[RMDB]
RNA sequence: GGGAACGACUCGAGUAGAGUCGAAAAAUCAACCAGUACGACCACUUCAAGACCAACAUCGAAGGACUCAACAUCCACUUUGUUCGAGUUCAGCCGGCAAAGUCCACGGACCCUAAACGGAAUGUCCGGUAUGAAGUGACUUCGGUCACUUCAUACCAAAAGAAACAACAACAACAAC
Reactivity to DMS in 0.01 (KOAc 150mM, MgCl2 10mM, bicine 150mM(pH8.5), 24C), signal-to-noise 2, nucleotides 027 to 126: a120u000c120a010a040c030c040a070g030u000a060c030g000a060c070c010a060c060u000u020c080a070a070g000a060c070c010a070a090c060a040u000c170g020a120a120g000g010a040c030u000c050a060a010c080a050u010c100c180a050c160u000u000u000g020u000u000c090g030a050g000u000u010c050a030g030c030c010g020g030c030a000a040a060g020u030c050c050a120c090g000g000a060c010c000c000u000a050a040a160c120g000g010a100a060u000g000u000c020c060
Reactivity to 2A3 in 0.01 (KOAc 150mM, MgCl2 10mM, bicine 150mM(pH8.5), 24C), signal-to-noise 2, nucleotides 027 to 126: a000u060c050a050a010c030c000a010g040u020a000c070g020a040c000c000a020c000u080u020c020a060a080g040a090c010c000a050a100c030a100u080c040g060a140a010g030g030a010c020u020c030a020a020c040a030u070c080c080a060c090u110u070u020g010u070u090c080g000a010g050u030u050c040a020g020c010c010g020g020c070a000a140a000g020u020c020c050a000c100g000g010a010c000c010c030u140a220a220a000c070g010g070a060a080u060g060u010c010c010
This 177-nucleotide RNA was probed chemically with DMS and 2A3.
The RNA was probed in 150 mM KOAc, 10 mM MgCl2 and 150 mM bicine (pH 8.5) at 24 C.
For DMS the reverse transcriptase was MarathonRT.
It was measured as part of the RMDB library OK2TST.